An RNA of 177 nucleotides, treated with DMS and 2A3 and read out base by base. 2A3 adducts were read by reverse transcription with SuperScript II with manganese.

[RMDB]
RNA sequence: GGGAACGACUCGAGUAGAGUCGAAAAGGAUCCUAAGUACUCUGGGUAACUGCCUGGAGAUCAGUUACCAGUGAGGAGUACUCUAUUUGUCAAAGAUCUCCAGGUUGACGGGUAGAGAAUAGGAUCGCUACACCUUAGUAUUCGUACUAAGGUGUAGAAAAGAAACAACAACAACAAC
Reactivity to DMS in 0.01 (KOAc 150mM, MgCl2 10mM, bicine 150mM(pH8.5), 24C), signal-to-noise 9, nucleotides 027 to 126: g000g000a010u000c000c000u000a030a120g010u000a040c000u000c000u010g020g010g000u000a050a090c040u000g000c070c020u000g000g010a090g010a050u000c000a060g010u000u000a050c050c060a120g010u010g010a080g000g010a150g010u010a090c010u000c000u010a030u000u000u000g010u000c040a040a090a090g000a040u000c020u010c020c000a050g000g010u000u000g010a040c040g000g000g000u000a020g000a050g010a130a160u000a030g000g000a010u000c010g000
Reactivity to 2A3 in 0.01 (KOAc 150mM, MgCl2 10mM, bicine 150mM(pH8.5), 24C), signal-to-noise 6, nucleotides 027 to 126: g020g000a000u000c010c000u010a050a010g050u020a040c000u010c020u090g060g000g050u050a040a030c010u010g020c000c020u020g010g040a040g000a090u040c000a000g020u010u030a000c000c010a030g030u020g110a040g020g010a020g030u040a030c000u000c000u010a040u000u030u020g010u010c020a010a010a040g040a060u000c030u000c020c000a000g030g000u010u010g020a020c020g030g020g030u040a010g010a010g020a070a030u030a030g010g000a000u000c000g000
The reactions ran in a buffer of 150 mM KOAc, 10 mM MgCl2 and 150 mM bicine (pH 8.5), at 24 C.